[RMDB]
RNA sequence: GGGAACGACUCGAGUAGAGUCGAAAAUAUUACGCUUAUGGCGCGGCCUGUUCCGAGGUUAGUGUUGAUACGCUGACCGGCGAAUAUGUGGUGGAGCGCACCGAUAUUCUGCAUGAUACCGGGCGCAGCCCUCCUGAGGAUUCGUCCUCAGGAGGGCAAAAGAAACAACAACAACAAC
Reactivity to DMS in 0.01 (KOAc 150mM, MgCl2 10mM, bicine 150mM(pH8.5), 24C), signal-to-noise 6, nucleotides 027 to 126: u010a090u000u000a080c040g010c020u000u010a110u000g020g010c030g030c070g010g000c020c030u000g010u010u000c030c030g010a180g010g010u000u000a010g020u000g010u000u010g020a190u010a080c030g020c000u000g000a020c010c000g000g020c140g000a040a030u000a040u010g020u000g010g010u000g010g000a130g000c040g010c010a060c010c000g010a020u000a010u000u000c050u000g030c160a110u010g010a050u000a040c050c020g010g000g010c010g010c040a090
Reactivity to 2A3 in 0.01 (KOAc 150mM, MgCl2 10mM, bicine 150mM(pH8.5), 24C), signal-to-noise 4, nucleotides 027 to 126: u160a040u110u080a050c030g030c030u170u060a100u300g080g000c000g010c000g100g060c000c010u030g030u050u000c020c020g040a060g030g000u020u000a010g000u030g040u070u150g170a130u090a270c020g000c000u010g000a010c000c040g020g010c030g010a030a010u070a060u100g160u050g050g040u040g020g090a090g060c090g000c090a070c000c000g010a000u010a010u070u040c050u120g170c080a070u130g010a010u060a040c010c010g000g000g030c030g000c020a010